RNA sequence: GGGAACGACUCGAGUAGAGUCGAAAACAGUGAGACAUGAUUGUACCACUGCACUCCAACCUGGGCAACAGAGAGAGAUGCUUUCUAAAAUACAAAACAAAACAAAACAAAAAAAACAGUCAUGUGUGCAAAGACUAUUUAAUGACACAUAGAAAUACCAUUUAUGCGCAUUCGUGCGCAUAAAUGGAAAAGAAACAACAACAACAAC
Reactivity to 2A3 in 0.01 (KOAc 150mM, MgCl2 10mM, bicine 150mM(pH8.5), 24C), signal-to-noise 2, nucleotides 027 to 156: c010a010g020u010g080a160g090a040c010a060u120g070a150u180u100g010u060a170c010c000a050c030u000g030c020a030c010u000c020c000a010a020c010c000u060g000g060g000c010a080a060c030a120g060a000g010a000g000a010g010a060u030g060c000u030u110u000c030u090a050a160a030a030u130a050c010a060a050a070a000c020a010a070a040a060c030a010a150a070a000c180a170a020a110a030a040a000a000a000c040a000g100u050c040a040u030g010u020g010u040g010c080a070a060a020g060a020c000u040a110u090u170u170a040a070u040g060a020c000a000c030a040u070a030g040a020a090a000u110a050
This 207-nucleotide RNA was probed chemically with 2A3. The RNA was probed in 150 mM KOAc, 10 mM MgCl2 and 150 mM bicine (pH 8.5) at 24 C. It was measured as part of the RMDB library OK3TST. For 2A3 the reverse transcriptase was SuperScript II with manganese.